An RNA of 177 nucleotides, treated with 2A3 and read out base by base. Values cover nucleotides 27 to 126. The reactions ran in a buffer of 150 mM KOAc, 10 mM MgCl2 and 150 mM bicine (pH 8.5), at 24 C.

RNA sequence: GGGAACGACUCGAGUAGAGUCGAAAAUCAGCAUAAACUUGUAAUGCACAGUGUUUAUAUGCGACUGGCAUAAUGACUGGUUUAAUAACACUUAAGUUAUCGAUAUUAACCGCAGCGGCCAUUACAGGGUUCUAUCCAGCUUCGGCUGGAUAGAACCAAAAGAAACAACAACAACAAC
Reactivity to 2A3 in 0.01 (KOAc 150mM, MgCl2 10mM, bicine 150mM(pH8.5), 24C), signal-to-noise 1, nucleotides 027 to 126: u090c000a000g020c010a040u050a150a110a000c090u100u090g010u130a180a040u040g060c160a080c110a230g000u030g110u000u100u000a300u060a080u250g130c030g040a030c000u040g000g000c000a000u000a030a000u300g110a050c080u020g050g040u050u030u020a000a000u000a000a000c050a000c010u240u100a070a000g060u180u030a030u060c040g140a000u000a030u100u090a080a000c040c000g000c000a000g000c000g000g000c000c000a000u000u190a000c000a000g000